[RMDB]
Structure probing data (2A3 and DMS) for a 207-nucleotide construct. 2A3 adducts were read by reverse transcription with SuperScript II with manganese. For DMS, 2,709 sequencing reads were counted. Source: RMDB library OK3TST, as collected in RNAgym.
RNA sequence: GGGAACGACUCGAGUAGAGUCGAAAAGUAAUAGAUAUGAGGAUGACGAGAAAGGGUGCGCUGAUAUCCUUGACGAAUGCUAGCAGUAAAUAGAAUAGCGCUCCUAAUACAACUAGCAACAAAAGGAUAAGGUAUCGUGAUGUCAAUCACAUUGCGACAGUGGGGUAAUGUUCGCAUUACCCCACUGAAAAGAAACAACAACAACAAC
Reactivity to 2A3 in 0.01 (KOAc 150mM, MgCl2 10mM, bicine 150mM(pH8.5), 24C), signal-to-noise 3, nucleotides 027 to 156: g020u040a020a130u060a130g040a040u090a080u160g010a000g030g020a010u060g040a050c060g020a020g090a100a060a050g020g020g000u040g020c040g000c030u020g030a030u010a000u090c000c010u010u000g020a010c060g060a100a050u040g000c000u010a000g000c050a030g080u100a030a070a110u130a060g070a100a070u040a070g050c020g000c030u030c000c000u020a050a030u120a050c010a030a020c000u010a000g000c000a010a090c000a060a160a000a000g000g000a010u030a040a040g080g000u080a040u080c010g000u020g010a010u010g020u030c100a030a000u120c000a010c000a020u000u020g030c000g010a000
Reactivity to DMS in 0.01 (KOAc 150mM, MgCl2 10mM, bicine 150mM(pH8.5), 24C), signal-to-noise 2, nucleotides 027 to 156: g010u000a080a090u010a120g030a120u000a070u020g000a100g000g010a050u000g000a070c020g020a100g000a040a060a100g000g000g060u010g000c070g050c070u000g030a290u000a060u000c010c000u000u000g020a170c060g010a220a120u000g000c010u000a020g000c050a130g000u060a040a100a120u010a130g000a060a130u010a090g040c060g010c100u010c050c000u000a030a240u010a040c050a110a020c010u000a010g000c000a040a090c060a070a130a030a020g000g000a020u000a040a130g060g000u000a080u010c010g070u000g000a010u000g000u000c010a080a090u000c100a080c000a030u000u000g000c000g000a100